[RMDB]
Chemical mapping of a 170-nucleotide RNA with 2A3. 2A3 adducts were read by reverse transcription with SuperScript II with manganese. Reactivities are given for positions 27 through 129.
RNA sequence: GGGAACGACUCGAGUAGAGUCGAAAAGGCCGCGUCCGAGGUUCCCAUUCAAAGGGGAGAGGGGGGGACUUGGAGCACAGGGGUCCAGUUCAGUCCGUGGGAUUACCCCGGAUCUCCCGUUCUCCACAAGGGGCUACCUUCGGGUAGCCCAAAAGAAACAACAACAACAAC
Reactivity to 2A3 in 0.01 (KOAc 150mM, MgCl2 10mM, bicine 150mM(pH8.5), 24C), signal-to-noise 1, nucleotides 027 to 129: g010g040c000c000g030c000g050u000c040c050g060a080g000g000u070u060c000c000c000a000u030u070c010a000a080a010g030g020g000g000a170g010a000g000g000g000g000g000g000g000a000c000u060u090g020g000a050g020c010a000c000a110g000g000g000g060u000c050c020a000g000u050u060c000a010g020u010c000c130g000u160g050g000g100a140u080u300a110c000c000c000c000g000g030a000u000c040u040c000c000c000g020u020u020c010u000c000c000a050c000a000a060g020